This 177-nucleotide RNA was probed chemically with DMS and 2A3. The RNA was probed in 150 mM KOAc, 10 mM MgCl2 and 150 mM bicine (pH 8.5) at 24 C.
[RMDB]
RNA sequence: GGGAACGACUCGAGUAGAGUCGAAAAAAGCCUCAGAGAUUUGGUAGAUGCUUAAUGAUGUAGAGGUUGCGAUGAAUUUUGGAUUGUUCUCUCAAGUUAGCAGGCAGGUCACUUUUCUCUUUUACGAUCACAUUAUCUGGUUCGCCAGAUAAUGUGAAAAAGAAACAACAACAACAAC
Reactivity to DMS in 0.01 (KOAc 150mM, MgCl2 10mM, bicine 150mM(pH8.5), 24C), signal-to-noise 2, nucleotides 027 to 126: a070a100g010c050c010u000c100a030g020a150g000a090u010u010u000g010g010u000a070g010a080u020g020c060u000u000a070a050u010g000a110u010g040u000a150g010a030g020g020u000u000g010c050g020a070u000g020a110a080u000u010u000u010g000g020a070u000u000g030u010u010c030u000c010u000c060a040a130g010u010u000a050g000c100a030g020g000c030a020g010g010u000c070a050c060u000u000u000u000c010u000c010u010u000u000u000a140c300g000a170
Reactivity to 2A3 in 0.01 (KOAc 150mM, MgCl2 10mM, bicine 150mM(pH8.5), 24C), signal-to-noise 1, nucleotides 027 to 126: a000a010g090c040c020u070c040a030g030a000g000a090u070u100u140g040g000u100a050g000a210u060g010c000u060u030a160a010u140g070a020u100g070u100a020g010a030g070g000u030u080g010c070g040a040u070g040a150a180u070u160u140u180g090g070a060u070u000g030u060u010c030u010c010u030c030a000a070g030u010u020a020g050c030a020g010g000c040a010g000g020u040c030a010c030u080u120u040u030c000u010c000u010u000u050u060a060c080g010a030